RNA sequence: GGGAACGACUCGAGUAGAGUCGAAAACGUCUGGUUCAUGCAAUGUUCCUAGCUCGUCAAGCCAACACAACAAUGGCUUGAUGAUUAUUCGCAUGCUUCAGAGCACGGCUUCAAGAGUGAGGGAUGGUAACAGGCGAUGUAUUCUCGCUAGGAGAUCGAUGUCAUAUAGCUUCGGCUAUAUGACAUCAAAAGAAACAACAACAACAAC
Reactivity to DMS in 0.01 (KOAc 150mM, MgCl2 10mM, bicine 150mM(pH8.5), 24C), signal-to-noise 2, nucleotides 027 to 156: c060g070u000c020u000g000g020u000u000c050a080u000g000c010a060a080u000g030u010u000c050c010u000a100g020c100u000c000g050u010c020a010a030g000c010c000a020a300c150a300c080a100a200c120a170a200u000g000g040c000u000u040g040a000u000g000a070u000u010a120u000u010c040g020c110a060u000g040c070u000u000c060a120g010a120g040c040a080c020g030g020c020u000u000c020a100a150g020a060g010u010g000a130g020g020g020a090u000g010g020u000a110a070c010a100g050g000c010g020a090u000g000u000a180u020u000c060u000c020g000c040u000a040g010g020a060g000a070u000c120
Reactivity to 2A3 in 0.01 (KOAc 150mM, MgCl2 10mM, bicine 150mM(pH8.5), 24C), signal-to-noise 5, nucleotides 027 to 156: c040g050u030c030u060g060g040u060u060c020a020u050g010c030a070a110u100g050u050u060c010c010u030a020g020c010u000c000g000u010c000a000a000g000c000c000a140a040c100a040c040a300a030c050a110a240u060g000g000c000u000u000g000a000u000g000a020u060u160a070u090u080c050g000c000a010u030g000c020u080u050c040a040g010a020g080c020a030c070g070g010c010u100u090c110a100a040g040a040g100u110g020a060g010g030g010a050u090g050g040u050a040a030c020a020g000g030c010g000a010u050g030u070a120u050u040c030u000c020g000c040u050a040g070g020a060g030a030u170c150
The data come from the RNA Mapping Database (RMDB), library OK3TST. An RNA of 207 nucleotides, treated with DMS and 2A3 and read out base by base. For 2A3 the reverse transcriptase was SuperScript II with manganese.